[RMDB]
RNA sequence: GGGAACGACUCGAGUAGAGUCGAAAAGGUAGCUGAUUAUCCCGGAGUGAUUUUUCAAAAUCACCAGACGGGAUCAGAUAAUCAUCGAAAUUCUGGUAACGGCGCGACCCUUUUACCCAGAUGUCACGUCUUACCCUGUAUUCGUACAGGGUAAGACAAAAGAAACAACAACAACAAC
Reactivity to DMS in 0.01 (KOAc 150mM, MgCl2 10mM, bicine 150mM(pH8.5), 24C), signal-to-noise 2, nucleotides 027 to 126: g030g010u000a140g000c030u000g030a120u010u010a080u000c000c000c010g040g000a120g000u000g040a010u000u000u070u000u080c300a130a040a030a000u000c000a000c010c160a120g010a300c010g000g000g000a020u000c070a060g000a030u000a020a060u010c060a090u010c120g030a150a070a100u000u000c040u000g000g000u000a030a100c100g000g010c060g010c080g040a090c150c010c000u010u000u000u000a160c040c040c000a110g010a030u010g000u020c180a140c110
Reactivity to 2A3 in 0.01 (KOAc 150mM, MgCl2 10mM, bicine 150mM(pH8.5), 24C), signal-to-noise 2, nucleotides 027 to 126: g030g030u050a020g000c010u000g000a180u110u170a030u130c020c000c020g050g030a050g010u000g010a000u030u020u020u040u230c110a190a210a000a030u020c010a000c000c000a050g070a290c010g000g000g060a010u030c000a000g010a000u070a050a050u110c140a030u150c070g030a100a070a130u100u000c000u060g000g060u090a110a080c020g090g000c030g000c040g160a050c020c000c000u000u010u030u080a080c020c010c000a020g090a160u150g140u200c060a040c150